[RMDB]
RNA sequence: GGGAACGACUCGAGUAGAGUCGAAAAUCAAGAGCCAUAUGAUGAGUUAGCACGAACUGGUAAAGCACCCUUUGUCUCUGAGAUCGCACUUCGCAAUCUGUACACAUCCCAGCGGGGCAAUAUGGAGCCCAUAAGGGAUGUUCGCAUCCCUUAUGGGAAAAGAAACAACAACAACAAC
Reactivity to 2A3 in 0.01 (KOAc 150mM, MgCl2 10mM, bicine 150mM(pH8.5), 24C), signal-to-noise 2, nucleotides 027 to 126: u100c030a050a050g050a040g070c000c020a010u040a060u140g090a050u050g010a020g060u080u070a020g040c010a000c070g040a140a030c070u040g000g060u110a100a070a040g050c020a060c020c030c000u030u030u030g040u020c020u010c020u040g040a050g020a070u050c030g010c050a030c060u130u020c050g010c040a020a060u050c000u030g070u080a040c040a000c010a110u020c000c010c000a010g030c040g010g000g000g020c020a010a000u080a110u160g090g030a060g050
Reactivity to DMS in 0.01 (KOAc 150mM, MgCl2 10mM, bicine 150mM(pH8.5), 24C), signal-to-noise 4, nucleotides 027 to 126: u010c090a110a070g000a140g000c040c020a040u010a090u010g010a090u000g000a080g020u010u000a050g020c030a060c090g000a070a120c140u030g000g000u010a040a070a120g000c080a030c040c020c020u000u000u000g010u000c020u010c060u010g010a100g000a040u000c060g000c060a090c160u010u000c110g000c030a050a030u000c040u000g010u000a070c120a050c090a060u000c020c010c010a100g010c080g010g010g000g030c060a020a050u000a100u000g000g000a150g010